[RMDB]
RNA sequence: GGGAACGACUCGAGUAGAGUCGAAAAACUUUUCAGCAUCAUCCAAGAAUAGCCUUAACAAUGCGUUUAUUAUUAAAGAGGACACUCAUGUGGAAUGAGAUGCAUGCGAGGCUACAGUGCAUUGCCAAACCAUCUAUUUUUGGGGUUAAGACUAUAAGGAUGAUAUCCCAUUCGUGGGAUAUCAUCCAAAAGAAACAACAACAACAAC
Reactivity to DMS in 0.01 (KOAc 150mM, MgCl2 10mM, bicine 150mM(pH8.5), 24C), signal-to-noise 1, nucleotides 027 to 156: a130c060u000u010u020u000c060a170g000c000a120u000c060a080u000c010c000a060a150g000a100a110u000a060g020c020c030u000u010a100a130c090a080a010u000g020c020g000u000u020u010a120u070u000a100u000u000a050a180a110g000a140g000g010a110c020a060c040u000c000a050u000g030u000g060g010a190a070u010g010a270g010a110u000g000c040a060u020g030c030g010a180g000g000c000u000a030c000a110g010u020g000c000a030u000u000g060c010c020a060a150a080c070c010a040u000c040u000a140u000u000u000u000u000g000g000g070g000u000u000a020a040g000a180c040u000a090u020a060a300
Reactivity to 2A3 in 0.01 (KOAc 150mM, MgCl2 10mM, bicine 150mM(pH8.5), 24C), signal-to-noise 3, nucleotides 027 to 156: a000c050u150u060u070u050c090a070g080c050a090u070c020a020u010c020c010a020a030g020a080a070u010a010g020c010c020u070u120a120a060c030a050a170u050g010c010g000u020u050u080a180u050u050a050u030u180a080a030a020g100a040g020g020a020c030a010c060u030c010a010u050g020u110g150g170a080a010u020g010a030g030a030u050g030c000a010u050g000c000g020a040g070g000c000u020a020c020a020g070u040g000c010a010u030u090g060c010c020a020a020a050c010c000a010u030c010u110a110u020u110u010u120u050g050g010g000g000u030u110a020a030g030a030c010u110a030u180a280a050